Chemical mapping of a 177-nucleotide RNA with 2A3 and DMS. The data come from the RNA Mapping Database (RMDB), library OK2TRN. The 2A3 profile rests on 945 reads.
[RMDB]
RNA sequence: GGGAACGACUCGAGUAGAGUCGAAAAUAGGGGGCCAAUAACUCACAGAAAGAGGACAGUGCUGCAUUUUGUCUAUGUACCGAAACUCAGACUGGUGAGUUGUCUUAUUUAUUGACAUUGCGGUAGCCAGUCGGGAAGUAUUCGUACUUCCCGACUGAAAAGAAACAACAACAACAAC
Reactivity to 2A3 in 0.01 (KOAc 150mM, MgCl2 10mM, bicine 150mM(pH8.5), 24C), signal-to-noise 1, nucleotides 027 to 126: u290a030g000g010g000g010g000c010c000a020a000u090a010a000c000u000c000a060c020a050g100a010a190a000g030a040g060g020a020c030a030g040u040g120c030u040g050c020a060u160u180u110u060g090u000c040u030a050u070g020u000a010c010c010g020a110a090a020c000u020c020a010g020a090c030u050g170g030u040g040a010g080u010u020g010u030c010u030u180a150u200u280u060a110u000u130g010a030c020a030u000u100g030c070g130g000u000a040g000c010
Reactivity to DMS in 0.01 (KOAc 150mM, MgCl2 10mM, bicine 150mM(pH8.5), 24C), signal-to-noise 3, nucleotides 027 to 126: u010a060g000g010g010g000g000c060c080a110a070u010a030a070c040u000c020a060c060a070g010a030a210a180g000a070g000g000a120c080a040g000u010g000c060u000g000c040a100u010u010u010u010g010u000c150u010a040u010g020u000a040c020c070g000a070a090a100c020u000c020a010g010a300c050u000g010g020u000g010a060g000u000u000g010u000c040u000u000a120u020u000u010a090u010u010g000a000c030a080u010u010g010c040g010g020u000a090g020c080
DMS adducts were read by reverse transcription with MarathonRT. For DMS, 2,152 sequencing reads were counted.